[RMDB]
The data come from the RNA Mapping Database (RMDB), library OK3TST. The record gives the reactivity of an RNA of 207 nucleotides to 2A3.
RNA sequence: GGGAACGACUCGAGUAGAGUCGAAAAAUCAUUUAUCACAUCAGUUAGGUGAGUGGAUUAGUAGUAAGGGUUUCAUCAUAACAUUGGCACAAUUGGAAUCAGUGACAGUGCUCUUUUUGUUAAAGGAUUGAGUUUGGGGAGCCUUAAUUCCUAACAACUUGGAAUGCGAAUUCGUUCGCAUUCCAAGAAAAGAAACAACAACAACAAC
Reactivity to 2A3 in 0.01 (KOAc 150mM, MgCl2 10mM, bicine 150mM(pH8.5), 24C), signal-to-noise 1, nucleotides 027 to 156: a000u060c030a020u050u140u120a190u120c110a090c000a060u060c030a010g020u080u150a090g020g000u010g040a060g030u000g030g040a070u020u070a050g030u000a000g030u050a080a100g070g020g010u020u110u040c030a090u040c000a010u070a130a000c060a030u070u100g040g000c000a000c000a040a080u100u070g060g020a020a010u070c030a060g000u010g030a010c000a010g060u030g070c000u070c030u050u200u040u030u040g030u020u040a140a110a000g010g000a010u020u040g010a000g030u000u110u120g010g000g020g060a000g000c000c000u010u030a030a030u010u020c000c000u110a140a000c020a020a030
High 2A3 reactivity points to a flexible backbone, as in loops and unpaired stretches. The RNA was probed in 150 mM KOAc, 10 mM MgCl2 and 150 mM bicine (pH 8.5) at 24 C. The 2A3 profile rests on 511 reads.